[RMDB]
RNA sequence: GGGAACGACUCGAGUAGAGUCGAAAAGGCUCGCUCGUCGGGCGCAGCGAUGCGAUCCAGCACGUCUACGACAUGAUCGAGCACAACGCCCGCACCGAAACCGCGGUGCUGUUGUGGGGCGAGCCCACGAUGCCGUCCCAUUCGUGGGACGGCAUCGAAAAGAAACAACAACAACAAC
Reactivity to DMS in 0.01 (KOAc 150mM, MgCl2 10mM, bicine 150mM(pH8.5), 24C), signal-to-noise 1, nucleotides 027 to 126: g010g000c000u000c000g000c020u000c000g010u000c040g020g010g000c000g000c010a010g000c160g000a100u000g000c010g000a060u010c090c080a160g000c030a040c050g000u020c020u000a030c090g000a040c080a120u040g040a060u000c050g010a130g010c020a050c010a020a060c030g040c010c020c000g010c000a010c080c030g000a090a130a180c300c150g000c000g000g010u010g000c010u010g020u000u000g000u000g020g020g000g000c040g010a080g010c000c000c050a060
Reactivity to 2A3 in 0.01 (KOAc 150mM, MgCl2 10mM, bicine 150mM(pH8.5), 24C), signal-to-noise 1, nucleotides 027 to 126: g010g000c000u030c030g000c010u010c010g070u030c040g020g040g030c010g000c000a040g020c000g140a080u020g010c010g030a080u110c040c000a020g000c010a000c030g090u050c040u150a130c070g070a030c010a070u180g010a120u120c030g100a000g020c000a010c010a020a000c010g000c070c030c010g000c020a000c000c050g270a200a150a040c080c060g070c010g010g000u110g040c090u120g000u030u000g010u010g000g000g010g030c000g000a000g060c050c010c020a010